[RMDB]
RNA sequence: GGGAACGACUCGAGUAGAGUCGAAAAGACACGACGGAGACGUCGUGUCAAAGAGUGGGAAACCACUCAAAGAGCCACAGCUUCGGCUGUGGCUCAAGGCGCUGCACCGUCUGCGGAACCAACGGAAGAUAAAUUUACUGUUCGCAGUAAAUUUAUCAAAAGAAACAACAACAACAAC
Reactivity to DMS in 0.01 (KOAc 150mM, MgCl2 10mM, bicine 150mM(pH8.5), 24C), signal-to-noise 3, nucleotides 027 to 126: g000a010c010a010c000g000a030c000g010g000a260g010a210c010g030u000c000g040u000g000u000c000a010a060a080g000a010g050u000g000g000g000a180a110a240c000c000a010c010u000c010a020a060a080g010a040g010c000c000a020c000a050g050c010u000u000c240g050g100c000u000g080u000g020g000c000u000c000a020a050g000g000c150g020c060u000g000c060a100c110c030g010u000c020u000g010c060g000g010a100a130c090c040a030a060c120g010g000a120a130
Reactivity to 2A3 in 0.01 (KOAc 150mM, MgCl2 10mM, bicine 150mM(pH8.5), 24C), signal-to-noise 2, nucleotides 027 to 126: g010a010c000a010c000g010a000c010g030g010a050g030a040c010g010u000c000g000u000g000u000c000a000a000a010g000a000g000u000g010g000g010a010a030a090c010c000a000c000u000c000a020a060a010g030a000g010c000c010a020c000a000g030c010u140u230c300g110g000c000u030g000u000g020g010c000u000c000a000a000g010g000c050g000c050u090g010c030a060c060c030g070u050c050u060g040c030g050g100a060a040c020c000a030a030c040g040g030a080a060